Structure probing data (DMS and 2A3) for a 177-nucleotide construct. It was measured as part of the RMDB library OK2TRN. For 2A3, 2,437 sequencing reads were counted.
RNA sequence: GGGAACGACUCGAGUAGAGUCGAAAAAAUGUUUAGCCGUCGACAGUUUCAGCUUCCCUUUGAACUUGGCAAAGUGUGUCCGCUGAUGAACAUUUGUAUCUGAAACUCUGUAAUAGAGUUUCCAUGGAUAGGUAUAUAUCUUCGGAUAUAUACCUAUAAAAGAAACAACAACAACAAC
Reactivity to DMS in 0.01 (KOAc 150mM, MgCl2 10mM, bicine 150mM(pH8.5), 24C), signal-to-noise 7, nucleotides 027 to 126: a030a030u000g010u000u000u000a080g010c030c050g030u000c150g000a060c060a060g010u010u010u000c060a070g010c070u000u000c050c010c020u000u010u000g010a070a080c110u000u000g010g020c060a060a060a070g010u000g020u000g000u000c030c070g010c050u000g010a070u010g010a050a040c050a050u000u000u010g010u000a090u010c070u000g000a020a010a010c000u000c000u000g000u010a120a100u010a020g000a030g000u000u000u000c010c220a070u010g010g000
Reactivity to 2A3 in 0.01 (KOAc 150mM, MgCl2 10mM, bicine 150mM(pH8.5), 24C), signal-to-noise 2, nucleotides 027 to 126: a010a000u110g010u000u070u050a030g010c020c020g050u050c000g020a040c040a080g000u020u070u130c000a010g040c000u020u040c000c000c000u010u030u070g050a070a050c040u110u120g070g000c030a040a040a020g090u110g010u020g020u070c040c040g000c020u030g030a060u060g030a070a020c020a030u060u060u080g080u080a110u070c060u070g000a000a000a020c000u010c010u060g070u220a120a250u130a280g010a010g000u000u010u000c010c000a050u100g050g060

For DMS the reverse transcriptase was MarathonRT.